[RMDB]
RNA sequence: GGGAACGACUCGAGUAGAGUCGAAAAAGUGAGUAUGGCUCGUUACGACGAGCCAUACUCACAACGGUUUUCCUAAAUCGUCGUGAGACGGACCUUGGAAAACCUAGUAUUUAAAUAAAUAGGUCAAAUUAGCCUAGAUCCUUCGGGAUCUAGGCAAGUCAGUAUUACACUUCGGUGUAAUACUGACAAAAGAAACAACAACAACAAC
Reactivity to 2A3 in 0.01 (KOAc 150mM, MgCl2 10mM, bicine 150mM(pH8.5), 24C), signal-to-noise 2, nucleotides 027 to 156: a000g000u000g010a000g000u010a010u000g010g000c000u010c030g000u010u050a080c270g010a000c000g000a060g000c000c000a000u000a000c010u000c010a000c000a000a000c000g010g010u000u000u000u000c000c000u000a000a010a010u060c000g000u010c010g010u020g220a140g010a040c010g000g000a000c000c000u010u030g010g000a000a000a000a000c000c000u000a010g000u010a050u100u190u130a070a150a090u150a060a060a050u290a040g020g000u010c000a000a060a160u240u190a070g000c000c000u000a000g000a020u000c000c000u020u050c160g050g000g000a000u010c000u000a000g000g000c000a000a000
Source: RMDB library M2RFPK, as collected in RNAgym. Chemical mapping of a 207-nucleotide RNA with 2A3. High 2A3 reactivity points to a flexible backbone, as in loops and unpaired stretches.